[RMDB]
RNA sequence: GGGAACGACUCGAGUAGAGUCGAAAACAGCGAGAGGCGUAGGAGAGAGGGCCGCGGUGCUCUGGAGUAGAGGCUUCUUGCUUCGAAACACCAUCGAUCGUCCCUUCUUCUUUACCUCCUCCUGGCUCUUGCUGAGACGCCGACCGGUGGCAUCACCUCACUAUAUAUCCUUCGGGAUAUAUAGUGAAAAAGAAACAACAACAACAAC
Reactivity to 2A3 in 0.01 (KOAc 150mM, MgCl2 10mM, bicine 150mM(pH8.5), 24C), signal-to-noise 6, nucleotides 027 to 156: c010a000g010c020g020a030g000a010g100g060c060g050u080a000g000g010a010g000a010g010a010g000g000g010c020c000g040c010g000g000u000g000c000u000c010u020g000g000a000g010u000a010g000a000g000g000c020u150u080c090u260u300g010c000u010u000c020g010a010a010a000c000a010c160c010a000u000c000g070a300u030c000g010u010c000c000c000u050u040c020u040u010c010u020u080u110a080c010c000u000c010c000u010c010c020u050g070g000c000u000c000u010u020g000c010u010g010a020g020a040c070g050c050c010g070a130c040c080g080g030u060g030g020c040a050u170c030a040c000c010
Reactivity to DMS in 0.01 (KOAc 150mM, MgCl2 10mM, bicine 150mM(pH8.5), 24C), signal-to-noise 2, nucleotides 027 to 156: c060a060g000c060g010a060g000a050g020g010c080g020u010a040g020g010a010g040a080g020a060g050g020g070c080c040g020c060g000g020u000g030c030u000c010u010g020g030a280g030u020a150g010a030g030g010c000u000u000c190u000u000g030c010u000u000c000g000a300a190a290c010a040c120c010a050u000c000g000a090u010c040g000u010c010c000c010u010u020c020u000u010c030u000u000u000a010c030c010u000c010c000u010c030c010u000g000g000c030u000c050u000u000g030c070u000g000a120g030a090c080g030c050c040g020a250c090c060g020g020u010g000g030c070a140u000c030a080c090c040